[RMDB]
RNA sequence: GGGAACGACUCGAGUAGAGUCGAAAAGCAAGGAGCUUCGGCUCCUUGCAAAAGAAAGCUCCAAAAGGAGCAAAGGACAUGCAAAGAAAAAGUCCAAAUGCAAAAGUCCGUUCUUCGGAACGGACAAGUCUUCGAUAAAGUUCGCUUUAUCGAAGACAAAAGAAACAACAACAACAAC
Reactivity to 2A3 in 0.01 (KOAc 150mM, MgCl2 10mM, bicine 150mM(pH8.5), 24C), signal-to-noise 1, nucleotides 027 to 126: g000c010a000a030g020g010a010g020c030u130u160c300g030g010c000u000c000c000u000u000g020c000a000a000a000a000g010a010a020a000g020c000u020c030c000a040a300a000a300g000g000a030g000c040a100a060a000g010g010a000c010a030u130g070c080a180a060a190g080a120a220a050a020a000g030u000c050c060a080a000a040u160g000c020a050a050a050a090g000u000c010c000g020u000u030c000u000u040c200g080g000a000a000c000g010g000a000c000a000a010
Reactivity to DMS in 0.01 (KOAc 150mM, MgCl2 10mM, bicine 150mM(pH8.5), 24C), signal-to-noise 1, nucleotides 027 to 126: g080c000a050a000g000g050a020g020c010u000u000c180g030g040c020u000c000c000u000u010g000c010a030a030a120a220g030a100a200a170g010c040u000c000c060a130a090a150a250g000g040a000g000c000a010a120a150g010g030a050c000a000u000g040c170a050a130a130g030a100a040a070a010a120g000u000c030c000a090a170a110u050g000c100a030a060a190a260g010u000c000c000g000u000u020c000u000u020c260g060g000a010a050c000g010g000a020c000a030a050